[RMDB]
RNA sequence: GGGAACGACUCGAGUAGAGUCGAAAAUGAUGGGAGUUUUUUUCUUGUUGCAUAAAUGAACGUGGGCGAGGUUUUUAUUUUCAAACUUGGUGUACUAUAGUGCAAUGCGUUGUUAAUUGUAAUACGAGAUAACUUACUACUUCGGUAGUAAGUUAUCAAAAGAAACAACAACAACAAC
Reactivity to DMS in 0.01 (KOAc 150mM, MgCl2 10mM, bicine 150mM(pH8.5), 24C), signal-to-noise 2, nucleotides 027 to 126: u000g010a090u010g000g000g020a130g000u000u000u000u000u030u010u010c020u020u000g010u010u000g000c060a070u010a110a060a060u010g000a060a090c060g010u010g000g010g000c080g020a050g030g010u000u000u000u000u000a070u020u000u040u000c090a060a040a050c120u020u000g010g020u000g000u000a040c060u000a090u000a090g030u010g000c050a050a040u000g030c150g010u000u000g020u000u000a060a130u020u010g010u000a030a060u020a110c080g020a300
Reactivity to 2A3 in 0.01 (KOAc 150mM, MgCl2 10mM, bicine 150mM(pH8.5), 24C), signal-to-noise 1, nucleotides 027 to 126: u190g020a040u040g000g030g030a000g010u000u030u010u090u030u070u080c030u090u150g000u060u000g000c000a020u030a190a170a070u150g060a090a020c030g040u000g020g050g000c030g010a020g000g040u000u030u030u050u080a150u060u200u080u100c080a050a000a000c000u070u090g090g000u110g080u000a030c010u030a010u080a100g040u020g010c000a050a050u060g070c020g030u000u070g040u030u070a110a160u040u020g030u030a030a070u020a120c030g010a020
Chemical mapping of a 177-nucleotide RNA with DMS and 2A3. Conditions: 150 mM KOAc, 10 mM MgCl2 and 150 mM bicine (pH 8.5), 24 C. For 2A3, 887 sequencing reads were counted. Source: RMDB library RFMREP, as collected in RNAgym.